[RMDB]
RNA sequence: GGGAACGACUCGAGUAGAGUCGAAAAAAGGUGUUUUUCCACAGCAGGAAAUGAUGCAGUUGAAGAAAUGGUCUGUGUGUCUGUUCUCAAGCUCUGGCAAGCAGUGUGCAGCAGGAACGAGGAAAACCAGCGUGUGCUAGUGAUACACCAUGACAGAUAUAUCCGAGUACUUCGGUACUCGGAUAUAAAAAGAAACAACAACAACAAC
Reactivity to 2A3 in 0.01 (KOAc 150mM, MgCl2 10mM, bicine 150mM(pH8.5), 24C), signal-to-noise 1, nucleotides 027 to 156: a000a000g090g000u040g020u020u070u000u020u050c110c000a010c030a020g060c030a050g030g090a110a050a120u170g090a010u050g010c060a050g020u140u130g020a180a010g020a040a090a050u020g100g010u110c020u020g020u000g040u000g010u050c060u060g100u140u000c010u000c050a050a090g010c030u020c010u070g060g000c050a050a000g040c010a030g040u000g050u050g140c010a000g020c000a010g000g060a050a000c050g030a080g020g020a140a050a030a030c050c010a060g000c080g010u100g010u030g020c010u010a000g020u000g010a000u040a040c020a000c000c010a000u090g120a000c080a040g120a050
Reactivity to DMS in 0.01 (KOAc 150mM, MgCl2 10mM, bicine 150mM(pH8.5), 24C), signal-to-noise 1, nucleotides 027 to 156: a080a080g000g000u000g010u000u010u000u000u000c000c050a020c120a050g000c020a130g000g010a150a100a090u010g000a000u000g070c020a090g010u000u020g000a070a170g010a050a130a090u000g030g020u000c050u010g000u000g030u000g000u000c000u000g030u000u000c010u000c050a040a090g010c040u000c020u000g030g060c060a090a070g000c030a100g000u000g000u000g070c040a110g000c030a060g020g020a060a070c060g000a140g030g010a070a030a130a100c030c000a110g020c080g050u000g000u000g020c030u000a070g000u000g000a150u000a010c040a070c030c030a080u010g000a070c130a070g010a120